[RMDB]
RNA sequence: GGGAACGACUCGAGUAGAGUCGAAAAGAAAAAGGAGGACAUGUCCGCCUGAUUGUGUCCGACCCUGUAGAUACUUCGCUCUGGAAAUUGUGCGGGACAAGCCACGCGCGCAGCGAGCCGAAAAAAAUGUCCACUUAAUGUUCGCAUUAAGUGGACAAAAAGAAACAACAACAACAAC
Reactivity to DMS in 0.01 (KOAc 150mM, MgCl2 10mM, bicine 150mM(pH8.5), 24C), signal-to-noise 1, nucleotides 027 to 126: g020a020a040a030a150a020g000g010a300g010g000a010c020a060u000g010u030c010c260g000c140c040u000g000a070u000u000g040u000g000u000c010c020g010a160c080c010c000u000g000u000a100g020a070u000a030c030u000u000c050g040c020u010c000u000g000g010a080a050a120u000u000g000u010g010c030g000g020g020a070c050a100a060g000c050c030a040c070g000c030g010c010g020c070a080g000c070g010a080g000c030c040g010a030a000a030a180a040a030a220